An RNA of 177 nucleotides, treated with 2A3 and DMS and read out base by base. The reactions ran in a buffer of 150 mM KOAc, 10 mM MgCl2 and 150 mM bicine (pH 8.5), at 24 C. For DMS the reverse transcriptase was MarathonRT. For 2A3, 2,657 sequencing reads were counted. The data come from the RNA Mapping Database (RMDB), library OK2TST.
RNA sequence: GGGAACGACUCGAGUAGAGUCGAAAACGCAAUCCCGCUGUGGCUGAAGAUGUAACCUUGCAACAUGCGGCCCAUGAUGGUGCUAAAUGCUUUCUGGGUGGUGAAGGUCAGUUGCAUCCCGCGGGCCGUGUACAGGUCCAUUCGUGGACCUGUACACAAAAGAAACAACAACAACAAC
Reactivity to 2A3 in 0.01 (KOAc 150mM, MgCl2 10mM, bicine 150mM(pH8.5), 24C), signal-to-noise 3, nucleotides 027 to 126: c070g000c030a030a100u080c010c020c020g000c030u090g020u030g050g020c020u050g030a050a030g050a100u110g040u080a020a040c020c050u060u160g050c040a080a060c000a200u160g030c000g040g000c010c000c020a050u170g020a070u060g010g110u050g000c020u160a170a120a070u210g000c000u030u030u040c020u050g060g020g000u100g020g070u050g060a070a030g050g010u080c010a020g040u040u020g000c000a020u030c020c000c000g020c020g000g020g000c020c050
Reactivity to DMS in 0.01 (KOAc 150mM, MgCl2 10mM, bicine 150mM(pH8.5), 24C), signal-to-noise 2, nucleotides 027 to 126: c110g010c120a130a070u000c010c010c020g000c140u000g010u000g000g000c030u000g020a080a110g000a070u000g000u030a080a130c030c030u000u010g020c070a060a070c070a060u000g000c030g000g000c000c010c000a070u000g000a060u010g000g030u000g020c060u000a040a100a050u000g000c020u000u000u020c030u000g010g010g000u020g010g040u000g010a040a080g000g000u010c140a050g010u000u000g010c000a050u000c010c170c050g020c080g010g000g020c130c020